Chemical mapping of a 177-nucleotide RNA with 2A3 and DMS.
[RMDB]
RNA sequence: GGGAACGACUCGAGUAGAGUCGAAAACUUUGCCGAGCAGCAUCUGAUAUGGGACCUGUCCGUGUGCUUGGUGGGCUGGAUGCAAUACAUACCGGUCAUGAUCAAUCUGUGGCGGAACUGGAACAUCCAAACUCGUACAGUUCGCUGUACGAGUUUGAAAAGAAACAACAACAACAAC
Reactivity to 2A3 in 0.01 (KOAc 150mM, MgCl2 10mM, bicine 150mM(pH8.5), 24C), signal-to-noise 2, nucleotides 027 to 126: c040u080u100u160g010c010c030g000a010g040c030a000g000c000a040u030c030u080g060a090u030a110u230g050g050g050a070c020c050u010g040u030c010c050g060u120g050u050g050c020u040u050g000g020u030g000g050g000c020u030g010g000a020u050g040c060a090a030u120a230c020a010u090a220c020c000g070g000u030c020a090u130g070a070u070c030a090a010u000c050u040g060u040g070g000c010g010g030a020a060c030u060g050g040a040a040c020a030u000c030
Reactivity to DMS in 0.01 (KOAc 150mM, MgCl2 10mM, bicine 150mM(pH8.5), 24C), signal-to-noise 3, nucleotides 027 to 126: c060u010u010u010g020c010c020g000a110g000c040a070g010c080a050u010c060u000g000a070u000a090u010g000g000g000a080c110c030u000g000u000c030c080g010u000g020u010g010c040u000u000g010g010u000g000g000g020c020u000g010g000a080u010g010c070a080a090u020a290c070a030u010a140c050c050g020g030u010c030a080u000g020a040u010c070a070a080u000c070u010g020u000g010g000c060g010g010a060a090c080u010g010g000a090a090c090a060u000c070